[RMDB]
RNA sequence: GGGAACGACUCGAGUAGAGUCGAAAAUGUUCGGCAGCUUCCACUUACGAGGCCGCGGUCUACCGCUGUCACUGGUAGUCGCGAAGAGUUCGUCUCUGUCAGCCUUGGGAGCCGCGGACGGAGUAUGAGGUCCAGUAAUGAGAGCAGGGAAGAGUAAUCUCUCCAAGUUCUUCGGAACUUGGAGAGAAAAAGAAACAACAACAACAAC
Reactivity to 2A3 in 0.01 (KOAc 150mM, MgCl2 10mM, bicine 150mM(pH8.5), 24C), signal-to-noise 1, nucleotides 027 to 156: u130g000u030u030c010g160g050c020a000g010c000u030u000c020c000a040c100u090u210a010c040g020a000g020g000c020c000g020c020g000g010u000c000u020a020c000c000g020c080u150g290u300c120a040c100u110g010g010u010a020g010u010c000g000c010g030a060a050g030a010g070u190u180c120g040u050c080u000c040u070g000u060c070a000g050c030c020u040u020g010g000g030a000g030c070c030g000c020g000g000a000c020g010g010a070g020u070a070u140g050a010g000g060u000c050c030a000g010u050a030a080u110g040a010g000a010g030c050a030g000g000g030a060a060g010a070g090u080a060a120

The record gives the reactivity of an RNA of 207 nucleotides to 2A3. As a SHAPE reagent, 2A3 marks flexible, mostly unpaired nucleotides at the ribose 2'-OH. The data come from the RNA Mapping Database (RMDB), library ARCHII.